[RMDB]
RNA sequence: GGGAACGACUCGAGUAGAGUCGAAAAGAUAUGGACUCCCUUUAGCAACAGCUCGUGACUCGGAAACGAGUCCGAGACAUGCUACAGGGAGUCCUAAGUCAAAGCUCGACGGUUCGCCGUCGAGCAAUCUAACUCCAUCCUUCGGGAUGGAGUUAGAAAAAGAAACAACAACAACAAC
Reactivity to DMS in 0.01 (KOAc 150mM, MgCl2 10mM, bicine 150mM(pH8.5), 24C), signal-to-noise 1, nucleotides 027 to 126: g010a030u000a190u000g010g000a040c000u010c000c000c000u000u000u000a000g020c010a110a060c230a070g030c000u010c000g020u020g000a010c000u010c010g010g000a040a000a110c030g010a050g000u010c000c000g000a030g020a020c020a220u010g010c000u010a010c150a010g000g010g010a010g020u000c000c000u010a000a060g010u010c010a110a130a160g000c000u000c000g010a000c000g000g000u000u020c300g010c000c000g040u000c000g000a010g000c000a020a000